[RMDB]
RNA sequence: GGGAACGACUCGAGUAGAGUCGAAAACAAGAUAUCGGCAUCUCUCACGUAUGUGGCGGAUGCGGUGUCGCAGCGAUGCAGAACGUGGAGAUUCUGAUCCCGCGACUCCCAGGGAGCGCCUCCGACACAUUCGCGUAACGUUCGCGUUACGCGAAUGAAAAGAAACAACAACAACAAC
Reactivity to DMS in 0.01 (KOAc 150mM, MgCl2 10mM, bicine 150mM(pH8.5), 24C), signal-to-noise 2, nucleotides 027 to 126: c100a150a050g000a070u010a030u000c030g010g000c020a020u000c010u000c040u010c020a030c010g020u000a080u010g020u000g010g000c260g020g010a070u010g010c010g000g000u010g040u010c020g050c050a030g010c140g010a070u000g000c000a030g020a040a030c030g040u020g000g000a210g000a110u000u010c010u000g010a050u000c050c010c000g020c020g000a040c090u000c020c020c030a160g010g000g000a090g060c040g000c070c020u000c000c000g030a090c210a110
Reactivity to 2A3 in 0.01 (KOAc 150mM, MgCl2 10mM, bicine 150mM(pH8.5), 24C), signal-to-noise 2, nucleotides 027 to 126: c020a030a060g060a160u160a040u090c030g110g000c010a020u000c020u000c020u070c040a010c040g140u210a100u200g060u020g060g000c000g030g070a100u010g000c000g010g010u120g070u050c000g000c020a000g030c040g040a030u110g160c000a020g040a130a010c040g080u120g080g080a070g010a150u060u000c010u050g010a010u010c060c010c020g020c010g030a060c030u050c000c030c040a030g030g030g030a040g000c030g030c010c020u000c030c020g020a010c060a000